[RMDB]
RNA sequence: GGGAACGACUCGAGUAGAGUCGAAAAUACGACAGCAGUACGUUGUCCUUGUGACUGUCGGAGCAAAGAAACGCGACUAUGCUGUCCUUGCGCGCGCGCAGGUCCUUCCAGACGUACUUACUCAACACCGCAUGGCGAUGUUCGCAUCGCCAUGCGGAAAAGAAACAACAACAACAAC
Reactivity to 2A3 in 0.01 (KOAc 150mM, MgCl2 10mM, bicine 150mM(pH8.5), 24C), signal-to-noise 2, nucleotides 027 to 126: u300a070c090g000a000c000a000g030c000a000g060u010a070c030g020u090u090g200u180c000c000u100u090g000u120g030a100c030u120g060u300c050g030g000a020g000c010a020a090a000g030a010a040a000c000g000c070g030a000c070u030a080u300g060c000u020g000u050c000c000u020u090g020c010g010c000g000c010g030c000g000c070a020g000g000u020c000c070u090u030c030c000a080g030a040c070g010u080a030c060u050u040a090c030u020c060a040a090c010a040

This 177-nucleotide RNA was probed chemically with 2A3. The data come from the RNA Mapping Database (RMDB), library OK1LIB. The reactions ran in a buffer of 150 mM KOAc, 10 mM MgCl2 and 150 mM bicine (pH 8.5), at 24 C. Reactivities are given for positions 27 through 126.